Description
This 177-nucleotide RNA was probed chemically with 2A3 and DMS. The 2A3 profile rests on 29,951 reads. The RNA was probed in 150 mM KOAc, 10 mM MgCl2 and 150 mM bicine (pH 8.5) at 24 C. DMS adducts were read by reverse transcription with MarathonRT.
RNA sequence: GGGAACGACUCGAGUAGAGUCGAAAAACGUGGCGACCAGCAAACCGAAAACCGUGGAUAUACCGGAGAAGGAGAGCUCCUGAUGUGCCGCGUGGAUGCGAGGGACCAUGCAAAGUACAGUCAUUCGCAUAGUGAGCAAAUUCGUUUGCUCACUAUGAAAAGAAACAACAACAACAAC
Reactivity to 2A3 in 0.01 (KOAc 150mM, MgCl2 10mM, bicine 150mM(pH8.5), 24C), signal-to-noise 9, nucleotides 027 to 126: a000c020g010u020g020g000c030g050a060c020c010a010g020c020a050a070a040c020c010g050a090a060a010a040c020c010g060u150g040g060a130u120a020u060a300c040c030g020g000a020g020a060a020g030g030a030g010a010g010c010u020c010c030u160g060a160u120g060u100g040c010c000g000c000g000u020g040g040a050u120g010c020g010a070g010g040g000a010c020c010a040u090g040c060a180a120a050g050u070a090c030a020g030u030c020a080u090u050c030g000
Reactivity to DMS in 0.01 (KOAc 150mM, MgCl2 10mM, bicine 150mM(pH8.5), 24C), signal-to-noise 9, nucleotides 027 to 126: a050c040g030u000g010g030c010g010a100c080c090a060g010c060a050a200a290c020c020g000a070a100a150a080c060c020g020u010g010g010a170u010a130u010a070c090c020g000g010a060g010a160a230g000g000a060g000a300g000c040u000c080c060u000g000a060u000g010u000g000c010c020g020c020g010u000g000g010a090u000g020c030g010a060g010g010g000a070c030c040a080u010g010c060a050a060a110g010u000a040c120a070g000u000c050a080u000u000c070g010